[RMDB]
RNA sequence: GGGAACGACUCGAGUAGAGUCGAAAAAAAACGCUGGGUGAUAUGAGUAAGCGUAUUGUCAGCUCGUGCUGAAGCGCGCACGGCACCAGAGCUUGGAUUUAUACGCUGAAAUUAUCACCUGUGCUGAAGCGCGCACGGCAACCGAAAGGUGCGAAAACCUAUCCAUAUACUUCGGUAUAUGGAUAGGAAAAGAAACAACAACAACAAC
Reactivity to DMS in 0.01 (KOAc 150mM, MgCl2 10mM, bicine 150mM(pH8.5), 24C), signal-to-noise 1, nucleotides 027 to 156: a090a030a040a050c070g000c000u000g020g000g030u000g010a080u000a010u010g040a130g000u000a110a080g000c010g020u010a000u000u000g000u010c120a000g020c000u000c050g000u000g000c040u030g000a060a110g000c030g000c020g000c000a300c050g020g020c000a000c030c100a230g020a050g010c010u000u000g070g010a130u010u000u000a030u000a010c030g030c010u010g050a120a080a180u000u000a040u000c020a050c010c010u010g010u000g000c020u010g030a080a110g010c030g030c040g020c030a300c010g010g000c040a050a110c000c000g000a140a140a120g010g000u000g000c030g010a120a070a160a170
Reactivity to 2A3 in 0.01 (KOAc 150mM, MgCl2 10mM, bicine 150mM(pH8.5), 24C), signal-to-noise 3, nucleotides 027 to 156: a010a000a030a000c010g000c000u030g010g000g000u040g000a010u010a000u030g010a000g000u000a010a000g000c010g010u000a010u010u070g110u100c060a030g000c000u020c020g020u010g000c000u030g030a200a090g010c020g000c000g000c030a020c010g000g020c000a010c040c100a070g010a000g000c040u180u270g090g000a030u040u220u080a040u030a000c000g000c000u000g000a000a000a010u010u010a000u000c000a000c000c000u000g010u010g000c000u010g030a090a040g000c010g000c000g000c020a010c020g010g020c020a030a030c000c000g040a090a050a030g020g000u070g010c010g060a040a110a000a010
Conditions: 150 mM KOAc, 10 mM MgCl2 and 150 mM bicine (pH 8.5), 24 C. Chemical mapping of a 207-nucleotide RNA with DMS and 2A3. For DMS the reverse transcriptase was MarathonRT. It was measured as part of the RMDB library RNAMAK. For DMS, 2,279 sequencing reads were counted. 2A3 adducts were read by reverse transcription with SuperScript II with manganese.